[RMDB]
RNA sequence: GGGAACGACUCGAGUAGAGUCGAAAAUGAGAACCUCACACUACUGCCAACCCUUGAUGCUGGUCAAGUCAGUCGUGUGGAACUCUGUGAUAACCUAGCUGUCGGGGGAACAACACCAUCUUAUGGCCAGGACUAUGCCAUUCGUGGCAUAGUCCUGAAAAGAAACAACAACAACAAC
Reactivity to DMS in 0.01 (KOAc 150mM, MgCl2 10mM, bicine 150mM(pH8.5), 24C), signal-to-noise 2, nucleotides 027 to 126: u020g000a030g000a020a200c070c020u010c040a020c000a000c090u030a000c000u000g010c130c010a070a050c080c060c180u060u000g020a130u000g010c100u020g010g000u000c090a150a060g000u000c090a010g020u000c080g000u000g020u000g000g000a030a240c020u000c000u000g000u020g000a110u010a170a100c000c010u000a050g010c040u000g000u040c000g000g000g000g000g010a070a110c220a030a070c150a040c010c030a040u020c050u030u020a070u010g000g030c090
Reactivity to 2A3 in 0.01 (KOAc 150mM, MgCl2 10mM, bicine 150mM(pH8.5), 24C), signal-to-noise 5, nucleotides 027 to 126: u190g020a020g030a060a030c020c010u130c010a000c000a010c020u020a010c000u020g010c040c020a130a030c070c000c020u070u190g170a110u120g110c160u070g060g040u030c050a070a030g000u030c030a010g020u030c020g000u010g020u020g030g000a020a020c010u050c010u060g060u030g060a070u030a100a020c010c020u000a050g000c010u030g060u090c050g020g000g000g000g020a050a060c070a040a010c010a060c010c010a130u080c010u070u230a110u140g030g040c040
An RNA of 177 nucleotides, treated with DMS and 2A3 and read out base by base. Values are in units of 0.01, from 0 to 300, in steps of 10. The reactions ran in a buffer of 150 mM KOAc, 10 mM MgCl2 and 150 mM bicine (pH 8.5), at 24 C. 2A3 adducts were read by reverse transcription with SuperScript II with manganese. For 2A3, 2,920 sequencing reads were counted.